An RNA of 177 nucleotides, treated with 2A3 and DMS and read out base by base.
For DMS, 866 sequencing reads were counted.
For DMS the reverse transcriptase was MarathonRT.
Values are in units of 0.01, from 0 to 300, in steps of 10.
The reactions ran in a buffer of 150 mM KOAc, 10 mM MgCl2 and 150 mM bicine (pH 8.5), at 24 C.
The 2A3 profile rests on 726 reads.
RNA sequence: GGGAACGACUCGAGUAGAGUCGAAAAGGCCGACGUACAGUAGGCCCGAGUCGAUGGCCAGAUAGCUGAUCGAUGAUCUCUGACUGCAUCAGGUACGAUGUACAUGAUGGCCACGGCCUACGGCCGAAUUCCGUCGGAUCUUCGGAUCCGACGGAAUAAAAGAAACAACAACAACAAC
Reactivity to 2A3 in 0.01 (KOAc 150mM, MgCl2 10mM, bicine 150mM(pH8.5), 24C), signal-to-noise 1, nucleotides 027 to 126: g040g020c020c010g030a090c090g030u150a050c060a070g070u060a040g010g050c020c020c010g010a010g060u040c000g080a140u050g020g000c000c020a000g090a260u170a070g060c110u060g080a040u010c060g090a160u160g000a050u100c040u030c050u140g070a120c010u040g020c010a040u010c000a060g170g030u030a040c040g060a160u210g010u000a010c060a060u110g020a010u040g100g000c000c010a070c020g010g000c000c020u040a030c050g040g000c060c020g010a010
Reactivity to DMS in 0.01 (KOAc 150mM, MgCl2 10mM, bicine 150mM(pH8.5), 24C), signal-to-noise 1, nucleotides 027 to 126: g000g030c020c010g010a150c150g000u010a110c210a060g010u000a120g000g020c030c000c040g000a160g010u000c020g010a100u010g010g020c030c040a090g010a170u000a090g000c070u010g010a080u000c030g000a150u020g000a140u000c050u000c040u000g010a080c060u020g010c040a160u000c030a020g000g020u000a020c000g030a130u020g030u000a010c010a100u010g010a110u000g010g000c020c050a040c070g000g000c020c000u000a070c080g000g030c000c010g010a100